[RMDB]
RNA sequence: GGGAACGACUCGAGUAGAGUCGAAAAGCCUCUUAUGCAUAAGGGGGCUGCGUGGCCUAUUGUUAGACGACGUAUAGUGCAAAUGUUGUCAGACACUUUAGACAAAUUGUCUGAUUACUGUACGUUUUAGAAGACAUAGGUUCGCCUAUGUCUUCUAAAAAGAAACAACAACAACAAC
Reactivity to 2A3 in 0.01 (KOAc 150mM, MgCl2 10mM, bicine 150mM(pH8.5), 24C), signal-to-noise 1, nucleotides 027 to 126: g010c020c000u050c040u110u140a170u240g090c020a090u070a050a020g030g010g010g030g040c000u000g000c050g050u060g100g040c010c010u050a060u090u210g230u060u050a060g010a160c070g000a010c000g030u000a040u010a030g030u070g020c020a010a040a130u170g030u170u090g000u000c000a000g010a000c010a040c010u070u030u030a140g140a190c040a060a110a000u000u040g000u040c000u000g010a010u040u010a010c010u020g040u050a010c040g030u000u020u000
Reactivity to DMS in 0.01 (KOAc 150mM, MgCl2 10mM, bicine 150mM(pH8.5), 24C), signal-to-noise 2, nucleotides 027 to 126: g010c000c000u000c000u010u010a080u000g020c100a130u030a160a170g000g000g010g010g000c020u000g030c090g020u010g020g030c010c000u000a050u010u000g010u010u000a020g020a070c090g010a030c010g000u000a050u020a080g020u000g010c110a130a120a130u010g010u000u000g000u000c000a010g010a000c010a010c110u000u010u000a100g040a170c260a050a000a020u000u000g010u000c000u000g000a020u000u010a000c020u000g040u000a060c080g000u000u000u000

Structure probing data (2A3 and DMS) for a 177-nucleotide construct. It was measured as part of the RMDB library 15KREP. Values cover nucleotides 27 to 126. For DMS the reverse transcriptase was MarathonRT.